[RMDB]
RNA sequence: GGGAACGACUCGAGUAGAGUCGAAAAAUCGUAACUGCAAACGACGAUACGUUCGCACUGGCAGCCUAAGGGCCGCCGUCCUCUGCCUAGUUCACUGACGGGCUAGUGUCGCAAGACCGGUAGCAAUACCGCCAGAGGUCAUUUACGUCAGUUAAGCCAUCCUUGGUGUGUUCGCACACCAAGGAUGAAAAGAAACAACAACAACAAC
Reactivity to 2A3 in 0.01 (KOAc 150mM, MgCl2 10mM, bicine 150mM(pH8.5), 24C), signal-to-noise 2, nucleotides 027 to 156: a000u070c030g000u070a140a050c060u150g010c050a080a120a050c110g100a000c030g070a080u060a110c050g030u030u040c060g080c170a050c170u230g000g000c020a010g000c000c030u130a180a220g060g000g030c010c000g000c000c000g060u040c000c000u000c000u000g060c000c000u000a000g000u000u000c040a010c030u010g010a000c000g020g000g000c020u010a010g000u000g050u080c010g000c030a040a040g010a060c010c000g010g000u000a000g000c050a060a040u000a020c000c000g010c000c000a020g010a000g020g030u060c050a090u090u180u270a010c020g000u000c000a010g010u010u070a070a030g010c000